[RMDB]
This 177-nucleotide RNA was probed chemically with 2A3 and DMS.
RNA sequence: GGGAACGACUCGAGUAGAGUCGAAAAGAUAUGGACGAUGCAGCAACAGCGUGAGGGCUCGGAAACGAGCCUCACGACAUGCUGGGCAGUCCUAAGUCAAACACCGCUCUGUUCGCAGAGCGGUGAAUCAUACCUAUUCCUUCGGGAAUAGGUAUGAAAAAGAAACAACAACAACAAC
Reactivity to 2A3 in 0.01 (KOAc 150mM, MgCl2 10mM, bicine 150mM(pH8.5), 24C), signal-to-noise 6, nucleotides 027 to 126: g000a010u030a020u100g010g000a010c030g070a100u180g220c050a010g000c040a060a200c060a300g140c020g000u010g010a110g050g180g130c010u000c010g020g000a030a030a020c010g000a010g000c010c000u000c000a000c000g020a040c010a030u120g000c000u020g030g230g040c060a020g000u000c000c000u000a040a000g010u010c030a050a080a060c000a000c000c000g010c000u000c000u010g120u110u080c270g040c170a000g000a000g000c000g000g000u000g000a000a000
Reactivity to DMS in 0.01 (KOAc 150mM, MgCl2 10mM, bicine 150mM(pH8.5), 24C), signal-to-noise 7, nucleotides 027 to 126: g000a040u010a300u010g000g000a010c010g010a230u030g000c000a020g000c010a050a090c240a150g000c010g020u010g010a030g010g020g010c000u000c000g000g000a060a060a130c000g000a000g000c000c000u000c000a010c000g010a040c100a100u000g000c000u000g000g000g020c130a250g000u000c000c000u000a030a110g000u000c030a160a110a210c020a000c000c000g010c000u000c000u000g010u000u010c250g010c000a010g000a010g010c010g010g010u000g000a010a050

For DMS, 10,552 sequencing reads were counted. 2A3 adducts were read by reverse transcription with SuperScript II with manganese. It was measured as part of the RMDB library TTRDEL. The 2A3 profile rests on 16,882 reads.